RNA sequence: GGGAACGACUCGAGUAGAGUCGAAAAUUGGGUGGCCAGCAGUAGAAAUACUGCACCACUUUGUCAAACUCCGAACUUGCUAGAAUCGAAGAUACCAGGUGCUAGGGCGUAGGGAUAAGCUUUACGCAGAUUGUCUUAUUUUCGAAUAAGACAAUCUAAAAGAAACAACAACAACAAC
Reactivity to DMS in 0.01 (KOAc 150mM, MgCl2 10mM, bicine 150mM(pH8.5), 24C), signal-to-noise 9, nucleotides 027 to 126: u020u010g000g010g020u000g000g010c110c150a080g000c000a010g010u000a000g000a140a100a150u000a010c000u000g000c000a130c000c000a010c010u000u000u010g000u010c100a070a100a140c080u000c020c020g000a080a090c060u010u010g010c030u010a060g010a070a070u010c040g000a090a070g000a080u020a070c070c050a070g000g010u000g010c040u010a040g000g000g010c030g010u000a030g000g000g000a160u010a060a120g000c030u000u000u000a060c100g010c110
Reactivity to 2A3 in 0.01 (KOAc 150mM, MgCl2 10mM, bicine 150mM(pH8.5), 24C), signal-to-noise 9, nucleotides 027 to 126: u120u080g030g010g000u010g000g020c100c130a040g000c010a000g000u010a000g020a020a050a020u010a010c000u000g000c000a010c000c000a000c010u050u010u070g090u030c030a060a050a040c030u000c020c020g040a070a050c040u060u100g020c020u060a040g070a090a070u070c070g050a110a020g030a110u090a140c030c020a040g010g040u040g030c030u060a030g040g050g000c010g020u030a030g030g010g020a070u080a140a050g050c000u030u060u020a040c070g000c030
Source: RMDB libraries RFM100 and RFMREP, as collected in RNAgym.
This 177-nucleotide RNA was probed chemically with DMS and 2A3.
The reactions ran in a buffer of 150 mM KOAc, 10 mM MgCl2 and 150 mM bicine (pH 8.5), at 24 C.
For 2A3 the reverse transcriptase was SuperScript II with manganese.